[RMDB]
RNA sequence: GGGAACGACUCGAGUAGAGUCGAAAAUAUGAAGGGGGUUGUCUUGCUGCUAAAGAUGUCAUUGUGACAAAUUUAGAUAAAUCGGCUGGAUAUCCAUUGAAUAAGUAUGGUAAAGCUAGAUUAUAUUAUGAAACAAUGUCAUAUGAAGAACAAGAUGCUUCGUAUCCUUGUUCGCAAGGAUACGAAGAAAAGAAACAACAACAACAAC
Reactivity to DMS in 0.01 (KOAc 150mM, MgCl2 10mM, bicine 150mM(pH8.5), 24C), signal-to-noise 1, nucleotides 027 to 156: u000a130u000g000a020a040g030g040g060g010g060u000u000g040u000c000u000u010g010c010u010g000c020u010a000a130a120g040a140u000g020u010c000a100u010u060g050u010g010a160c010a050a100a270u000u000u010a130g010a100u010a010a020a040u000c040g010g030c050u010g030g020a220u000a060u000c020c020a050u000u000g010a120a140u020a120a130g020u010a040u000g000g000u000a120a140a050g010c000u000a100g000a060u010u000a120u000a030u000u010a160u010g000a140a260a060c020a050a110u010g000u000c040a010u000a060u000g020a040a040g030a050a090c080a090a000g010a150u000g010
Reactivity to 2A3 in 0.01 (KOAc 150mM, MgCl2 10mM, bicine 150mM(pH8.5), 24C), signal-to-noise 2, nucleotides 027 to 156: u280a080u120g030a040a040g010g000g020g000g000u030u020g000u000c000u000u040g020c050u030g040c010u050a050a020a030g030a030u000g010u000c000a010u030u050g040u020g040a010c030a040a100a060u100u180u120a050g000a050u070a030a060a020u010c000g010g000c000u000g020g010a050u050a060u180c000c000a020u030u030g090a100a110u190a210a040g130u090a020u030g000g000u020a040a040a000g000c020u040a090g010a010u030u000a010u010a040u160u060a110u090g020a050a010a010c010a020a020u000g000u020c000a010u020a010u140g060a060a060g030a050a000c030a010a020g030a020u100g040
The record gives the reactivity of an RNA of 207 nucleotides to DMS and 2A3. The RNA was probed in 150 mM KOAc, 10 mM MgCl2 and 150 mM bicine (pH 8.5) at 24 C. The 2A3 profile rests on 1,366 reads. 2A3 adducts were read by reverse transcription with SuperScript II with manganese.